An RNA of 177 nucleotides, treated with 2A3 and DMS and read out base by base. For DMS, 1,950 sequencing reads were counted. Conditions: 150 mM KOAc, 10 mM MgCl2 and 150 mM bicine (pH 8.5), 24 C. Values cover nucleotides 27 to 126. For 2A3, 968 sequencing reads were counted. DMS adducts were read by reverse transcription with MarathonRT.

RNA sequence: GGGAACGACUCGAGUAGAGUCGAAAAAGAGAUCCAUUUUCUACUCAUGACAAAUAUGAUUUUGAGACAGUUCAGACUUACUUUCUUAAGCCAGGGGAUGAUUUAGAAACAGUGAUCAGCCAGCAUGCAUUGGGAGGACAUUCGUGUCCUCCCAAUGAAAAGAAACAACAACAACAAC
Reactivity to 2A3 in 0.01 (KOAc 150mM, MgCl2 10mM, bicine 150mM(pH8.5), 24C), signal-to-noise 2, nucleotides 027 to 126: a010g120a000g000a020u040c080c010a020u060u010u040u020c010u020a070c010u000c010a050u080g050a050c060a090a080a020u180a050u170g110a130u020u060u110u150g020a020g000a030c020a020g000u060u140c060a020g050a090c050u050u040a030c010u040u110u050c000u070u110a030a010g020c020c000a020g000g000g040g000a020u020g030a020u090u080u060a070g050a040a000a030c050a030g010u040g120a060u050c000a030g040c020c000a000g040c060a040u190g050
Reactivity to DMS in 0.01 (KOAc 150mM, MgCl2 10mM, bicine 150mM(pH8.5), 24C), signal-to-noise 2, nucleotides 027 to 126: a030g000a140g010a070u010c040c030a170u020u000u020u020c010u000a080c300u000c030a070u010g000a140c130a020a060a050u000a050u010g000a090u000u010u010u000g010a100g010a080c080a030g010u000u000c150a100g020a080c100u000u010a030c070u000u000u000c020u000u000a030a080g010c040c020a040g010g000g000g010a030u000g000a070u000u000u000a050g020a030a040a050c130a050g010u000g030a050u000c040a070g010c020c020a060g020c120a050u000g010